[RMDB]
RNA sequence: GGGAACGACUCGAGUAGAGUCGAAAAUUAUAGCAACACAAAUGGACUAAGACAACUAAUUUUCAGUUUUCAAAUGCGCAUCCCAUCAAGUCCUUAAGUUUUAUACAGUCCACAUUUAAUUUCUGCUGCAACAAGACUGUCUGAUGAGUAGCAAAAAGUCAAAAGACAGAUUCGUCUGUCUUUUGACAAAAGAAACAACAACAACAAC
Reactivity to DMS in 0.01 (KOAc 150mM, MgCl2 10mM, bicine 150mM(pH8.5), 24C), signal-to-noise 2, nucleotides 027 to 156: u000u010a130u020a060g000c000a070a100c020a150c030a070a100a180u000g010g000a080c030u010a150a140g010a120c030a070a070c060u010a040a080u030u000u000u000c050a150g030u000u000u000u020c040a110a070a130u020g000c000g000c040a090u000c010c030c000a060u000c070a060a060g050u000c010c040u000u000a070a150g030u010u000u000u000a110u010a090c010a070g010u000c030c020a030c110a110u000u000u000a040a140u000u000u010c060u000g000c000u000g000c040a050a110c070a120a050g020a090c040u010g010u020c060u010g030a070u020g010a080g040u010a090g020c060a060a030a050a050a150
Reactivity to 2A3 in 0.01 (KOAc 150mM, MgCl2 10mM, bicine 150mM(pH8.5), 24C), signal-to-noise 3, nucleotides 027 to 156: u120u040a080u090a120g020c020a040a090c040a020c030a080a090a160u100g000g010a010c020u110a100a040g050a030c030a030a010c030u120a050a180u120u120u140u130c070a020g010u070u040u040u090c060a040a070a030u100g010c040g000c020a050u020c000c020c000a030u090c030a030a040g030u040c000c000u060u070a100a020g030u010u030u120u100a090u010a080c010a000g010u030c030c020a040c000a130u110u140u180a130a060u110u120u100c040u090g040c020u030g000c000a050a030c000a000a180g040a050c020u060g040u080c060u040g080a100u090g020a030g080u080a000g030c040a030a070a000a030a030